Source information
This 207-nucleotide RNA was probed chemically with 2A3 and DMS. It was measured as part of the RMDB library ARCHII. For 2A3, 2,934 sequencing reads were counted. Conditions: 150 mM KOAc, 10 mM MgCl2 and 150 mM bicine (pH 8.5), 24 C. 2A3 adducts were read by reverse transcription with SuperScript II with manganese. Reactivities are rounded to 0.1 and cut off at 0 and 3.
RNA sequence: GGGAACGACUCGAGUAGAGUCGAAAAGAACCUGUGAACCAUGUCAGGUCCGGAAGGAAGCAGCAUUAAUCAGUGCUUCUCAUGUGCCGCGAGGUUGCCUGGCCCGAGCUAACUAUCAAGGUAACGCAGGUGAUUGCAUGUCGAGGUGAGGUGCGCGCUAUCAGUGUUGGUUCGCCAACACUGAUAGAAAAGAAACAACAACAACAAC
Reactivity to 2A3 in 0.01 (KOAc 150mM, MgCl2 10mM, bicine 150mM(pH8.5), 24C), signal-to-noise 4, nucleotides 027 to 156: g060a020a030c010c010u010g020u020g040a050a060c030c010a070u090g030u100c030a020g010g030u000c030c040g050g060a060a050g020g020a020a000g040c040a000g000c010a060u120u120a120a070u250c090a040g070u010g010c000u050u000c020u030c020a070u080g060u110g090c020c010g000c060g030a060g080g000u050u120g030c020c010u040g020g030c000c000c060g030a030g040c020u060a020a050c020u030a070u300c070a180a070g000g000u030a090a020c050g010c040a030g020g010u030g020a060u040u130g020c050a030u040g020u060c040g010a040g000g060u060g020a030g040g000u050g000c060g000c010g010
Reactivity to DMS in 0.01 (KOAc 150mM, MgCl2 10mM, bicine 150mM(pH8.5), 24C), signal-to-noise 2, nucleotides 027 to 156: g000a080a060c020c000u010g010u020g020a200a100c080c080a170u000g020u000c030a080g030g030u000c060c010g050g020a140a140g000g010a000a050g020c010a080g030c060a170u000u040a070a140u010c110a130g040u000g000c020u000u000c000u010c060a140u000g020u030g010c030c040g010c080g000a100g010g010u010u010g010c040c020u000g010g000c000c020c000g010a060g000c010u010a000a120c060u010a090u000c110a080a060g010g050u010a030a130c040g000c040a050g030g010u000g010a060u000u000g020c040a090u000g000u000c030g010a120g000g040u020g010a070g020g020u000g030c030g000c080g000